[RMDB]
RNA sequence: GGGAACGACUCGAGUAGAGUCGAAAAGCGUACUACAAUGGAGUGUCCGGGCUCGGGUUCGAACUACAGGAAUCCCAAAUAGGAUUCCUGCGAACCACUCCCCGGCGACACGUUGAAAUUGUAUCGCAAAAUCAUCUGCUGUUCGCAGCAGAUGAAACAGAUAGGGGUAGUUCGCUACCCCUAUCUGAAAAGAAACAACAACAACAAC
Reactivity to DMS in 0.01 (KOAc 150mM, MgCl2 10mM, bicine 150mM(pH8.5), 24C), signal-to-noise 1, nucleotides 027 to 156: g080c040g000u010a030c080u000a010c030a060a060u010g010g010a150g000u010g000u010c010c000g020g000g030c040u000c180g030g020g020u000u000c000g070a000a300c000u000a110c010a020g000g010a050a010u000c000c010c020a040a080a220u010a050g000g010a070u000u000c000c000u010g010c000g000a020a040c000c010a020c000u000c160c010c010c000g000g090c020g000a060c010a060c040g000u020u000g000a100a110a040u000u010g010u020a000u000c040g140c000a020a060a070a210u000c000a010u000c000u010g040c010u010g020u000u000c300g060c000a010g000c000a010g010a010u000g010a000a070a230
Reactivity to 2A3 in 0.01 (KOAc 150mM, MgCl2 10mM, bicine 150mM(pH8.5), 24C), signal-to-noise 3, nucleotides 027 to 156: g020c020g050u120a090c070u000a000c030a000a010u020g030g000a070g010u010g020u030c010c010g000g020g020c130u130c200g020g010g010u000u000c020g010a080a060c100u110a050c300a010g010g010a000a020u010c010c040c050a200a300a220u300a090g010g000a000u000u000c000c000u000g000c010g000a000a000c010c010a070c050u090c000c010c000c020g020g010c070g030a010c000a000c000g120u110u060g010a070a070a020u010u010g010u020a080u300c010g000c010a070a050a000a040u040c000a010u000c000u000g000c000u010g050u050u130c280g000c170a000g000c000a000g000a000u000g000a000a000a010